[RMDB]
RNA sequence: GGGAACGACUCGAGUAGAGUCGAAAAUCACCAGCGUCACUACAAUCCACGUCACCAGACUGGCCCACCACCUGGUACUAUUGCUCGAAGUCGUGGUGCUCCUACGAUUGUCGUAAAGAAAUCGCGCUGAGAAGUCUUUUCAAAAACCUCAGAAAGACACCCUGUUUAGCUUCGGCUAAACAGGGUGAAAAGAAACAACAACAACAAC
Reactivity to 2A3 in 0.01 (KOAc 150mM, MgCl2 10mM, bicine 150mM(pH8.5), 24C), signal-to-noise 1, nucleotides 027 to 156: u050c020a040c050c000a000g000c000g080u070c040a030c100u120a050c030a000a150u040c040c010a030c040g000u000c030a070c010c000a010g070a190c070u070g030g000c000c020c000a030c000c000a030c020c070u010g000g000u070a110c010u070a050u000u230g010c030u010c030g140a160a010g000u030c050g090u010g020g070u050g010c030u030c030c000u040a060c030g010a040u000u050g100u070c030g050u170a130a050a070g060a020a130a040u090c030g010c020g010c060u060g000a000g000a110a030g020u040c040u090u230u040u060c100a130a140a040a000a000c020c050u010c020a010g050a030a040a040g030a000